[RMDB]
RNA sequence: GGGAACGACUCGAGUAGAGUCGAAAAAGUUGGUGAAGCAGUUGGUACAAUUGCAGCCCAAUCUAUCGGUGAACCAGGUACACAGCUUACAAUGCGUACAUUCCAUACAGGUGGGGUAGCAGGUAGCCACUAUGCGAAAGUUCGCUUUCGCAUAGUGAAAAGAAACAACAACAACAAC
Reactivity to 2A3 in 0.01 (KOAc 150mM, MgCl2 10mM, bicine 150mM(pH8.5), 24C), signal-to-noise 6, nucleotides 027 to 126: a000g060u060u020g010g020u080g070a180a020g000c010a000g010u030u060g130g140u180a120c070a050a030u030u020g000c020a040g020c010c010c000a000a030u030c030u070a100u100c020g080g000u070g030a050a060c010c010a060g040g030u070a050c170a000c000a040g020c010u100u080a060c070a110a160u080g030c010g030u010a020c000a070u090u080c020c000a040u060a260c080a070g130g000u020g010g020g000g000u000a020g000c030a020g010g060u010a000g030c010
Reactivity to DMS in 0.01 (KOAc 150mM, MgCl2 10mM, bicine 150mM(pH8.5), 24C), signal-to-noise 5, nucleotides 027 to 126: a080g020u000u000g000g000u020g000a110a070g010c020a020g000u000u000g010g040u060a070c080a030a050u010u000g000c010a230g030c060c010c020a040a060u020c070u000a110u010c100g010g010u010g010a110a100c080c060a050g000g040u020a050c070a070c040a040g020c060u010u020a070c220a060a090u000g000c050g000u000a030c070a140u020u020c020c010a090u010a110c260a100g010g000u010g000g000g000g010u010a160g010c020a040g000g010u030a060g000c130